[RMDB]
The record gives the reactivity of an RNA of 177 nucleotides to 2A3 and DMS. DMS adducts were read by reverse transcription with MarathonRT. The 2A3 profile rests on 648 reads. Conditions: 150 mM KOAc, 10 mM MgCl2 and 150 mM bicine (pH 8.5), 24 C. 2A3 adducts were read by reverse transcription with SuperScript II with manganese.
RNA sequence: GGGAACGACUCGAGUAGAGUCGAAAAGAGUAUCCGGGAAGGCGUAGGGAAACCAAUAUGGCCGCAGCAUUGCGAGGGCCACCGUGUUCAAGCGCGGGGAGUCAAACGGGCACGACCCGAAACCCGGUACGAAGAGGACGUUCGCGUCCUCUUCGUAAAAAGAAACAACAACAACAAC
Reactivity to 2A3 in 0.01 (KOAc 150mM, MgCl2 10mM, bicine 150mM(pH8.5), 24C), signal-to-noise 2, nucleotides 027 to 126: g100a000g000u120a100u060c050c050g010g000g010a030a030g090g030c070g010u100a030g000g040g020a070a000a000c000c000a000a020u080a030u180g040g000c020c020g000c000a000g000c040a260u130u230g010c040g000a190g010g020g000c000c000a000c010c010g000u000g030u170u200c180a200a040g020c040g000c000g050g030g000g000a030g000u000c040a000a150a150c020g000g000g000c000a010c240g150a300c000c000c000g050a040a030a050c020c000c000g010g010
Reactivity to DMS in 0.01 (KOAc 150mM, MgCl2 10mM, bicine 150mM(pH8.5), 24C), signal-to-noise 2, nucleotides 027 to 126: g010a050g000u000a070u000c040c000g000g000g020a190a220g000g000c120g000u000a090g040g000g000a160a090a120c010c010a060a090u060a130u030g020g070c000c000g000c050a300g000c030a130u030u060g010c000g010a210g040g000g010c030c000a020c080c040g000u000g000u000u020c270a100a070g080c030g040c080g000g000g000g020a160g110u000c060a000a090a100c090g000g000g000c000a060c150g000a150c000c020c000g050a040a010a130c010c000c030g020g030